RNA sequence: GGGAACGACUCGAGUAGAGUCGAAAAUGCUUUAGAUUCAGUCGUUAAGAGUCUCAAUGAAUCUUUCAUUGACCUCAAGAAGCUAGGUGUGUACACGCAGCAACCAAACACACCCUGGUAUGCGUGGUGUGGUAACCGAAUUCGUUCGGUUACCACAAAAAGAAACAACAACAACAAC
Reactivity to DMS in 0.01 (KOAc 150mM, MgCl2 10mM, bicine 150mM(pH8.5), 24C), signal-to-noise 2, nucleotides 027 to 126: u000g020c050u000u000u000a080g010a110u010u010c110a090g010u000c080g000u000u000a090a130g000a010g020u000c140u010c000a010a040u000g010a010a110u020c160u010u000u000c000a010u000u010g000a030c290c010u000c020a110a230g030a060a020g010c040u000a030g010g010u010g010u000g020u000a120c030a030c010g010c010a050g000c080a060a070c020c000a050a110a050c120a120c210a120c040c030c050u010g000g000u030a020u000g010c050g020u000g020g010
Reactivity to 2A3 in 0.01 (KOAc 150mM, MgCl2 10mM, bicine 150mM(pH8.5), 24C), signal-to-noise 2, nucleotides 027 to 126: u050g020c000u070u070u100a040g030a080u140u270c080a070g080u040c050g090u160u080a130a030g000a020g030u050c010u000c100a010a040u030g040a050a050u100c100u050u150u010c020a010u010u010g000a010c000c000u000c010a010a110g010a010a000g030c040u060a020g040g000u060g040u010g000u070a040c010a000c030g050c010a000g000c030a030a020c040c010a020a100a000c060a010c010a040c070c000c010u050g040g080u150a050u050g020c010g010u020g050g040